RNA sequence: GGGAACGACUCGAGUAGAGUCGAAAAGAUAUGGACUUUACACUCAUCGAUCAUAGCUCCCCACCUCGGAAACGAGAGGCUAUGGGAGAGUUGAAAGUCCUAAGUCAAAGGGUUCUUCGGAACCCAACACUUCCUAUGGCUUCGGCCAUAGGAAGUGAAAAGAAACAACAACAACAAC
Reactivity to DMS in 0.01 (KOAc 150mM, MgCl2 10mM, bicine 150mM(pH8.5), 24C), signal-to-noise 1, nucleotides 027 to 126: g000a050u000a050u010g010g000a020c000u000u000u000a080c050a010c010u000c000a300u000c160g030a000u020c010a030u000a000g000c010u000c060c050c030c070a270c240c010u000c010g010g010a010a020a000c010g010a020g010a150g040g000c000u000a000u000g020g000g000a000g000a030g000u000u000g020a010a000a010g000u000c010c000u010a000a040g010u000c000a050a060a220g010g000g000u000u010c000u000u020c130g010g010a060a010c000c000c010a030a090
Reactivity to 2A3 in 0.01 (KOAc 150mM, MgCl2 10mM, bicine 150mM(pH8.5), 24C), signal-to-noise 1, nucleotides 027 to 126: g000a020u030a010u080g000g010a010c000u020u020u180a160c060a000c010u020c010a150u300c080g020a010u060c010a020u000a020g000c030u100c030c020c060c070a300c100c000u000c010g000g010a010a030a010c000g010a000g010a020g070g000c010u000a000u020g000g000g000a050g010a010g010u050u170g050a020a010a000g010u000c000c010u010a010a000g020u080c050a070a100a180g040g000g000u000u000c000u040u070c270g110g000a010a000c000c000c000a000a010